[RMDB]
RNA sequence: GGGAACGACUCGAGUAGAGUCGAAAAGCAGUUCCAGAGUGUGACGACUCUGAACUCGAAGGUAGAUGACCUCGUCACAGGUCAAAGUGAUAUUGAUAGGCAAGUAUCAGGAUCACACUACCGACAUACUUGUCUAUGUCAACUCGAGGAACUGAGAAUCAUCAUCAGCUUUCGAGCUGAUGAUGAUAAAAGAAACAACAACAACAAC
Reactivity to DMS in 0.01 (KOAc 150mM, MgCl2 10mM, bicine 150mM(pH8.5), 24C), signal-to-noise 2, nucleotides 027 to 156: g030c010a050g030u030u010c010c050a150g020a040g010u000g010u000g040a080c110g010a130c030u020c040u070g030a110a080c050u000c040g010a120a140g010g000u000a050g020a300u000g000a030c020c000u000c130g000u000c110a090c090a040g000g000u010c000a040a050a050g010u010g010a020u000a080u000u000g000a080u000a040g040g000c110a050a090g020u000a030u020c020a130g000g020a060u000c030a090c060a300c050u000a080c000c010g000a140c120a060u020a050c020u000u000g020u000c000u000a040u020g020u000c000a070a060c050u020c000g000a140g050g000a030a110c030u020g000a090g000a100
Reactivity to 2A3 in 0.01 (KOAc 150mM, MgCl2 10mM, bicine 150mM(pH8.5), 24C), signal-to-noise 5, nucleotides 027 to 156: g040c010a000g000u000u000c000c010a010g010a000g000u180g020u040g040a010c010g020a020c040u030c060u170g060a090a070c020u050c120g070a120a040g040g010u050a040g030a220u090g050a040c000c010u000c020g170u060c030a030c030a060g020g020u010c030a040a060a020g030u060g080a060u050a030u150u080g010a000u000a020g080g050c070a070a040g060u010a000u030c050a040g000g050a010u090c040a040c020a020c130u080a060c010c000g020a020c020a030u060a020c010u070u050g000u010c020u020a030u070g000u000c010a010a020c020u000c010g050a200g020g000a010a010c010u020g010a010g080a040
The record gives the reactivity of an RNA of 207 nucleotides to DMS and 2A3. The reactions ran in a buffer of 150 mM KOAc, 10 mM MgCl2 and 150 mM bicine (pH 8.5), at 24 C. For DMS, 2,999 sequencing reads were counted. DMS adducts were read by reverse transcription with MarathonRT. The data come from the RNA Mapping Database (RMDB), library OK3TST.